[RMDB]
RNA sequence: GGGAACGACUCGAGUAGAGUCGAAAACGCGGAAGGCGUGUUUGCUGACGUUUCCAUUCCCUUGUUUCAAUCAUUGGUUAAUCCCUUGAUUCCUUUGGGGAUUUUUGGGUUAAACUGAUUUUUGGGGUAUCAUGGGUUCAUUCGUGAACCCAUGAUAAAAAGAAACAACAACAACAAC
Reactivity to DMS in 0.01 (KOAc 150mM, MgCl2 10mM, bicine 150mM(pH8.5), 24C), signal-to-noise 3, nucleotides 027 to 126: c040g010c050g000g000a140a130g010g010c010g010u000g010u020u010u020g000c050u010g000a230c090g010u000u000u000c020c030a270u030u030c000c000c010u010u010g000u000u000u000c030a120a020u010c040a020u040u000g010g000u000u000a060a050u010c000c000c010u000u000g010a000u000u000c000c000u010u060u060g030g020g000g000a000u000u000u000u000u000g010g000g010u000u000a060a020a020c000u000g000a010u010u000u010u020u000g020g010g000g010
Reactivity to 2A3 in 0.01 (KOAc 150mM, MgCl2 10mM, bicine 150mM(pH8.5), 24C), signal-to-noise 4, nucleotides 027 to 126: c050g020c040g070g080a150a030g130g010c010g020u080g160u070u130u230g090c080u080g020a050c020g020u010u020u020c030c010a030u060u060c000c000c000u020u060g050u000u000u040c040a040a040u020c020a030u010u060g010g000u000u010a030a060u150c010c010c000u010u020g000a000u010u000c010c000u120u140u300g110g010g000g040a030u030u010u000u010u030g000g000g000u020u010a060a070a030c020u010g020a030u000u010u010u060u130g010g000g000g020

Source: RMDB libraries RFM100 and RFMREP, as collected in RNAgym.
The record gives the reactivity of an RNA of 177 nucleotides to DMS and 2A3.
For 2A3 the reverse transcriptase was SuperScript II with manganese.
Values cover nucleotides 27 to 126.
High DMS reactivity at an A or C suggests that its Watson-Crick edge is free.